[RMDB]
RNA sequence: GGGAACGACUCGAGUAGAGUCGAAAAGUGGAGCAACGUCGGAGGGAUGCUGCAGCAAAAGCAGAGACGCUGGCAGAGGAGCAGAGGCUGCGACUGCUGGAGAAGGAGAAGCUAGCAGAAGCCAACAGACAUGGGAAUUCUUCGGAAUUCCCAUGUCAAAAGAAACAACAACAACAAC
Reactivity to DMS in 0.01 (KOAc 150mM, MgCl2 10mM, bicine 150mM(pH8.5), 24C), signal-to-noise 2, nucleotides 027 to 126: g000u010g020g000a080g020c050a090a020c070g050u000c060g020g030a100g030g000g000a070u000g020c050u010g000c030a040g010c110a070a060a120a190g020c020a020g010a190g000a090c090g010c050u000g030g010c050a040g020a190g010g000a050g000c110a050g000a080g030g000c010u020g010c090g000a110c090u000g020c020u010g000g000a100g000a100a100g020g010a060g000a050a130g020c060u010a040g010c050a090g000a130a150g010c040c100a090a060c190a090